Structure probing data (2A3) for a 177-nucleotide construct. Conditions: 150 mM KOAc, 10 mM MgCl2 and 150 mM bicine (pH 8.5), 24 C.

[RMDB]
RNA sequence: GGGAACGACUCGAGUAGAGUCGAAAAGCAUACGUUACUAUAUCUGUGUUCGUAUGCGGUAGGCAACACAGAUAUAGUAAGCCUACCACCGUACGGUGGACAUGCGAAAGCAUGUCCAUCGUACGGAGCAGCUACUACCCUUCGGGGUAGUAGCUGCAAAAGAAACAACAACAACAAC
Reactivity to 2A3 in 0.01 (KOAc 150mM, MgCl2 10mM, bicine 150mM(pH8.5), 24C), signal-to-noise 2, nucleotides 027 to 126: g030c030a070u140a240c060g080u050u020a010c010u000a000u000a000u000c000u000g000u000g040u050u060c100g090u120a160u200g090c030g010g080u120a080g040g010c030a000a000c000a000c000a000g000a010u020a000u000a050g000u000a010a000g000c020c020u040a050c020c030a030c000c000g020u000a000c000g020g000u000g000g000a000c000a000u000g000c020g040a110a020a000g000c000a000u000g000u000c000c000a000u020c000g000u000a000c000g000g000a000